Chemical mapping of a 307-nucleotide RNA with 2A3 and DMS. Conditions: 150 mM KOAc, 10 mM MgCl2 and 150 mM bicine (pH 8.5), 24 C. It was measured as part of the RMDB library POS240. 2A3 adducts were read by reverse transcription with SuperScript II with manganese. For DMS the reverse transcriptase was MarathonRT.
[RMDB]
RNA sequence: GGGAACGACUCGAGUAGAGUCGAAAACACAGGCGUGAGCCUGUGAACAAGGUAACUUCGGUUACCUUGAGGACUGUUCUACGGAACAGUCCAGACCGACUUCGGUCGGUCACAUUGUCGUGAGACAAUGAACCUCAUACGGUGACGUAUGAGGAGUCUCUGCGUGAGCAGAGACAGCCGUAGGCUACGGCCUACGGCACGCAGUUGCGUGAGCAACUGCGAGAGUCACGUGAGUGACUCAACGUGGCCAUCACGAUAGAUGGUUUAGGUGCACAUUCGUGUGCACCAAAAGAAACAACAACAACAAC
Reactivity to 2A3 in 0.01 (KOAc 150mM, MgCl2 10mM, bicine 150mM(pH8.5), 24C), signal-to-noise 6, nucleotides 027 to 266: c000a000c000a000g000g000c010g060u160g060a020g010c000c000u000g000u000g000a010a020c010a000a000g010g000u000a000a000c000u040u190c300g090g000u010u000a000c000c000u000u000g000a010g000g000a000c000u000g010u010u010c020u030a060c300g090g000a000a000c000a000g000u000c000c000a000g000a000c000c000g000a000c000u040u050c220g100g000u000c000g000g000u010c010a020c000a020u000u000g000u000c030g040u060g130a100g000a020c000a000a000u020g020a030a070c000c000u000c000a000u000a000c000g020g030u060g060a020c000g000u000a000u000g000a000g000g000a010g000u000c000u000c000u000g010c010g040u090g070a030g000c000a000g000a000g000a000c000a000g000c000c000g000u000a000g000g000c000u010a020c300g110g000c000c000u000a000c000g000g000c000a000c010g000c000a000g000u000u000g010c010g050u100g070a090g000c000a000a000c000u000g000c000g000a100g000a000g000u000c000a000c010g070u110g130a110g020u000g000a020c000u000c000a000a020c010g010u020g100g010c000c000a000u000c000a010c020g220a070u050a040g010a000u010g030g000u020u030u110a030
Reactivity to DMS in 0.01 (KOAc 150mM, MgCl2 10mM, bicine 150mM(pH8.5), 24C), signal-to-noise 3, nucleotides 027 to 266: c020a010c000a000g000g000c010g010u030g010a240g020c000c010u010g000u000g000a100a300c000a000a010g000g010u000a000a010c000u000u030c110g030g000u000u000a000c000c000u000u000g000a130g010g000a010c000u000g010u000u010c010u000a130c140g010g000a010a000c000a000g010u000c000c010a060g010a030c010c000g000a010c000u020u040c180g020g010u000c000g000g000u000c010a140c010a000u000u000g000u000c000g020u050g000a260g000a020c000a010a000u000g010a180a240c000c000u000c010a010u000a000c000g010g000u010g000a060c000g000u000a000u000g000a000g010g000a040g020u000c010u000c010u010g000c010g000u020g000a200g020c000a020g000a000g010a010c010a060g010c010c000g020u000a000g000g020c010u000a100c200g030g000c000c000u000a010c000g020g000c030a000c040g000c010a020g000u000u000g020c040g000u010g000a220g010c000a000a010c000u000g000c010g000a060g000a010g010u000c000a000c000g000u020g010a170g000u010g000a010c000u000c000a060a150c010g000u000g000g000c000c010a020u000c000a090c030g000a100u020a020g010a010u000g000g000u000u010u010a080